This 177-nucleotide RNA was probed chemically with DMS. DMS adducts were read by reverse transcription with MarathonRT.
RNA sequence: GGGAACGACUCGAGUAGAGUCGAAAAGAUAUGGACGCUCUAGAGACUCUAAGACAGUCGGAAACGAUCGAGAGUUUCUUAGAGGCGUCCUAAGUCAAACGCAUUCGGGGUUCGCCCCGAAUGCGAACAUUGUGUCGUUCUUCGGAACGACACAAUGAAAAGAAACAACAACAACAAC
Reactivity to DMS in 0.01 (KOAc 150mM, MgCl2 10mM, bicine 150mM(pH8.5), 24C), signal-to-noise 1, nucleotides 027 to 126: g020a040u000a300u010g000g000a000c020g010c020u000c000u000a010g000a050g000a000c000u000c020u020a170a170g000a030c300a100g010u000c010g000g000a070a100a170c000g020a000u000c100g020a020g000a070g020u010u000u000c000u000u010a030g010a080g030g000c010g030u000c000c000u010a020a040g000u000c010a090a050a300c010g020c000a000u000u000c000g010g010g000g010u000u000c260g000c000c010c000c000g000a000a000u000g010c000g010a050a040